[RMDB]
RNA sequence: GGGAACGACUCGAGUAGAGUCGAAAAGGGGCAACUCUUCUCAGAAUCCAGCGAGAGGCGUGGAGAGAGGGCCGCGGUGCUCUGGAGUAGAGGCUCUGUUCCUCGAAACACCAUCGAUCGUCCCUUCUUCUUUACCUUCUUCUGGCUCUUCCGAUGAGUUAAGCAUCUACUUCGGUAGAUGCUUAACAAAAGAAACAACAACAACAAC
Reactivity to 2A3 in 0.01 (KOAc 150mM, MgCl2 10mM, bicine 150mM(pH8.5), 24C), signal-to-noise 2, nucleotides 027 to 156: g040g010g010g020c050a060a080c050u020c010u110u010c030u030c020a050g050a090a100u300c040c000a080g000c100g050a010g000a010g030g000c150g040u010g030g000a000g000a010g010a000g010g000g000c010c000g040c000g000g010u000g010c000u000c000u010g000g000a000g000u020a000g000a000g000g010c030u140c260u300g140u250u120c010c000u000c010g020a010a010a040c000a000c080c020a000u010c000g040a300u020c010g000u000c000c000c000u060u010c010u060u020c000u020u040u020a000c000c000u000u020c000u000u000c000u000g000g000c000u030c000u030u010c000c000g060a090u110g030a010